[RMDB]
RNA sequence: GGGAACGACUCGAGUAGAGUCGAAAAAAUUCUGGGGUCUCUUCCGGAGAGCAGAGGGUCCAGCUGCGUGGGGAGUGUGGUGUUCCCAGCCCUGCUGUCUGUUCGCUGGGUGUGAGUGACAAGAGUCCCCACUCCCUGCAGAAAUUCCAUUACCUGGCAUCCGCUUAGAAUUCGUUCUAAGCGGAUGAAAAGAAACAACAACAACAAC
Reactivity to 2A3 in 0.01 (KOAc 150mM, MgCl2 10mM, bicine 150mM(pH8.5), 24C), signal-to-noise 1, nucleotides 027 to 156: a000a020u300u130c110u100g040g070g110g120u100c040u030c030u070u010c060c080g150g000a120g030a030g060c030a030g000a010g000g010g200u020c000c010a010g010c020u050g010c020g100u230g050g010g000g000a010g010u010g000u110g000g030u080g040u080u000c000c010c000a000g010c020c010c000u110g000c050u050g020u190c100u080g140u190u280c040g000c010u000g000g020g020u090g060u030g030a240g050u120g020a020c020a060a160g080a070g300u110c000c000c000c000a000c000u000c030c030c000u010g060c000a000g090a010a030a000u070u070c010c000a060u080u170a090c050c040u090g000g000
This 207-nucleotide RNA was probed chemically with 2A3.
Source: RMDB library OK3TST, as collected in RNAgym.
Conditions: 150 mM KOAc, 10 mM MgCl2 and 150 mM bicine (pH 8.5), 24 C.
Reactivities are given for positions 27 through 156.